[RMDB]
RNA sequence: GGGAACGACUCGAGUAGAGUCGAAAAGCGAUCUUCUGCGAGUGAGCGGUUUGGAAGAGGAGGAGGUUUUGCUCUCUCGCAGUUGAUCGCGAAGUGGAGGAUUUCUUCUUCUUCUGAGGGAGGGAAAGGGAAUAGAUAACUUCGGUUAUCUAUUCCCAAAAGAAACAACAACAACAAC
Reactivity to DMS in 0.01 (KOAc 150mM, MgCl2 10mM, bicine 150mM(pH8.5), 24C), signal-to-noise 2, nucleotides 027 to 126: g000c010g020a000u000c000u000u000c000u000g010c000g010a020g050u000g030a000g020c000g000g000u010u000u010g010g000a120a110g000a020g010g000a140g040g000a150g000g040u010u020u030u040g010c020u000c000u000c000u000c000g000c000a040g000u000u000g010a000u000c000g000c000g020a060a030g010u030g010g000a160g010g000a150u010u010u030c030u000u000c060u010u010c030u030u040c080u020g010a080g000g000g000a050g010g000g000a050a070a110
Reactivity to 2A3 in 0.01 (KOAc 150mM, MgCl2 10mM, bicine 150mM(pH8.5), 24C), signal-to-noise 9, nucleotides 027 to 126: g000c000g000a000u000c000u010u000c000u000g000c000g000a000g000u030g000a000g000c040g070g100u090u180u170g160g020a130a100g040a090g100g070a130g110g100a160g050g030u070u100u220u240g020c000u000c000u000c000u000c000g000c000a000g000u010u000g000a000u000c000g000c010g000a020a000g030u080g010g060a120g030g050a100u110u040u020c020u040u010c000u060u010c000u070u030c050u100g050a100g010g010g020a100g010g020g000a030a040a070